[RMDB]
RNA sequence: GGGAACGACUCGAGUAGAGUCGAAAAAAACGAAAUUUUGUCCUUCAGCACACAUGUCUAUGUGUGCUGAAGUGAAAUUGGAAUUUCGCUAGGUUUGCUUAGUAGCUAGUACAAGUGUCGUGCUGCUAAUACAUGGCAACUUCGGUUGCCAUGUAUUAAAAGAAACAACAACAACAAC
Reactivity to DMS in 0.01 (KOAc 150mM, MgCl2 10mM, bicine 150mM(pH8.5), 24C), signal-to-noise 3, nucleotides 027 to 126: a060a040a080c020g020a010a010a010u000u000u000u010g040u000c010c000u000u000c000a000g030c000a010c000a010c000a010u010g000u020c270u050a020u000g020u000g000u000g000c010u000g000a010a000g030u050g000a020a060a110u030u040g000g010a010a000u000u000u000c010g020c100u020a130g020g010u010u020u000g010c080u000u000a040g010u000a030g010c000u000a060g020u010a020c050a160a110g020u060g020u000c070g020u000g010c000u000g000c040u000
Reactivity to 2A3 in 0.01 (KOAc 150mM, MgCl2 10mM, bicine 150mM(pH8.5), 24C), signal-to-noise 2, nucleotides 027 to 126: a010a000a000c050g010a020a030a020u020u010u040u070g060u020c000c000u000u020c000a000g000c030a000c000a000c000a010u020g240u300c230u300a010u000g000u070g000u000g020c000u000g030a000a000g000u010g010a030a040a010u060u120g060g000a000a000u020u000u000c070g000c070u030a060g000g080u050u080u030g050c000u000u040a000g000u010a010g030c040u030a070g010u060a040c050a120a080g140u130g030u180c050g020u050g020c020u000g020c000u000